Source: RMDB library RFM100, as collected in RNAgym.
Structure probing data (2A3 and DMS) for a 177-nucleotide construct.
RNA sequence: GGGAACGACUCGAGUAGAGUCGAAAAACACCCUCCCGUGACCUACGUGUAGGGGUGAAAGGCCCAUCGAACCGGGCAACAGCUGGUUCCAACCGAAACAUGUCGAAGCAUGACCUCUGCCGAGGUAUCACCCGAUGUCAUUCGUGACAUCGGGUGAAAAAGAAACAACAACAACAAC
Reactivity to 2A3 in 0.01 (KOAc 150mM, MgCl2 10mM, bicine 150mM(pH8.5), 24C), signal-to-noise 3, nucleotides 027 to 126: a000c050a040c000c000c000u060c060c010c000g050u040g150a170c000c070u070a040c120g010u120g070u260a080g000g000g000g000u010g080a020a020a020g020g010c020c000c000a030u060c040g000a010a000c000c000g010g060g040c020a100a080c070a070g100c010u020g000g010u010u000c000c020a130a050c040c020g030a060a020a000c020a030u100g060u090c100g080a070a030g060c010a040u040g030a010c000c010u040c000u010g050c060c020g010a010g010g020u010a080
Reactivity to DMS in 0.01 (KOAc 150mM, MgCl2 10mM, bicine 150mM(pH8.5), 24C), signal-to-noise 1, nucleotides 027 to 126: a130c130a060c000c000c010u000c040c020c030g030u060g010a060c060c170u010a050c000g010u000g020u010a120g000g000g030g030u010g000a000a040a120g000g000c000c100c060a130u000c080g060a080a090c010c050g000g000g080c160a100a060c290a210g000c020u000g000g010u010u000c060c220a140a100c090c000g000a070a070a110c030a000u000g010u000c040g060a170a160g060c040a050u000g000a040c000c000u000c000u000g000c160c000g000a050g000g000u000a230
The 2A3 profile rests on 1,980 reads. 2A3 adducts were read by reverse transcription with SuperScript II with manganese. DMS adducts were read by reverse transcription with MarathonRT. The DMS profile rests on 1,014 reads.